[RMDB]
The record gives the reactivity of an RNA of 177 nucleotides to DMS and 2A3.
RNA sequence: GGGAACGACUCGAGUAGAGUCGAAAACGUGCCAUGUUCGCAUGGCACGAAAUAAAGGAAACAGGAAGGCAUCGGCGCACGAUGUAAGAAGCGCAAAAUAAAAAACAUUUCACUUCGGUGAAAUGAAGCUAUACUACGUCUUCGGACGUAGUAUAGCAAAAGAAACAACAACAACAAC
Reactivity to DMS in 0.01 (KOAc 150mM, MgCl2 10mM, bicine 150mM(pH8.5), 24C), signal-to-noise 2, nucleotides 027 to 126: c000g010u010g010c010c000a000u000g010u000u000c190g080c000a010u010g010g000c010a010c030g000a050a040a030u000a080a140a080g000g000a090a040a060c090a040g000g020a100a040g000g000c000a030u000c040g020g010c060g010c030a090c030g010a030u000g000u000a060a080g010a140a080g010c050g020c030a080a040a080a070u040a030a030a040a040a050a080c000a000u000u000u020c000a010c000u000u010c180g010g000u000g000a000a000a000u000g020a040a070
Reactivity to 2A3 in 0.01 (KOAc 150mM, MgCl2 10mM, bicine 150mM(pH8.5), 24C), signal-to-noise 3, nucleotides 027 to 126: c010g000u000g000c000c000a000u000g040u040u060c210g000c150a000u010g000g000c010a000c000g000a010a010a000u130a000a040a010g110g000a070a060a030c030a030g060g020a060a000g050g000c000a020u030c040g010g000c020g000c010a050c070g020a000u030g030u120a000a080g060a140a030g010c030g010c030a020a040a070a050u200a040a110a000a010a000a000c000a000u000u000u000c010a000c000u010u080c210g100g000u000g000a010a000a000u000g000a030a000

2A3 adducts were read by reverse transcription with SuperScript II with manganese. The DMS profile rests on 1,862 reads. The reactions ran in a buffer of 150 mM KOAc, 10 mM MgCl2 and 150 mM bicine (pH 8.5), at 24 C. Source: RMDB library M2PK50, as collected in RNAgym.